[RMDB]
RNA sequence: GGGAACGACUCGAGUAGAGUCGAAAACGCUGACGGUGACCGAGUCGCCGAGAUCUUCGAGCAGCACGAAUGCGCGGGCGCUCGGCCCGGCAUGCAGGCGCACGUUGUCGAGGGCGUUGCCCACCGCGCAUACGGUGGAUUUCGAUCCACCGUAUGCAAAAGAAACAACAACAACAAC
Reactivity to DMS in 0.01 (KOAc 150mM, MgCl2 10mM, bicine 150mM(pH8.5), 24C), signal-to-noise 3, nucleotides 027 to 126: c130g000c000u000g010a060c000g000g000u030g020a120c020c050g000a050g020u050c050g020c000c010g010a070g030a110u010c080u010u000c020g000a140g010c070a060g020c040a100c100g030a060a010u030g010c050g030c060g010g020g000c060g030c060u000c040g010g000c020c000c010g000g020c020a030u020g000c020a170g010g020c040g000c060a090c100g010u020u000g000u000c010g000a150g000g000g050c000g000u010u020g000c010c010c000a120c060c090g020c250
Reactivity to 2A3 in 0.01 (KOAc 150mM, MgCl2 10mM, bicine 150mM(pH8.5), 24C), signal-to-noise 9, nucleotides 027 to 126: c030g000c020u040g040a020c000g020g030u030g050a220c020c050g030a040g040u160c050g000c000c010g060a100g020a100u060c050u070u070c040g040a040g050c060a020g030c030a030c130g110a120a040u100g010c290g000c050g060g010g000c010g010c060u050c010g040g000c000c000c010g000g000c020a020u140g000c030a010g050g000c010g000c020a040c070g070u060u100g030u050c020g010a100g010g070g050c020g020u020u080g090c000c000c000a020c020c040g100c020
The data come from the RNA Mapping Database (RMDB), library OK1LIB. An RNA of 177 nucleotides, treated with DMS and 2A3 and read out base by base. For DMS the reverse transcriptase was MarathonRT. For DMS, 6,493 sequencing reads were counted. DMS (dimethyl sulfate) methylates the pairing face of unpaired adenines and cytosines. Conditions: 150 mM KOAc, 10 mM MgCl2 and 150 mM bicine (pH 8.5), 24 C.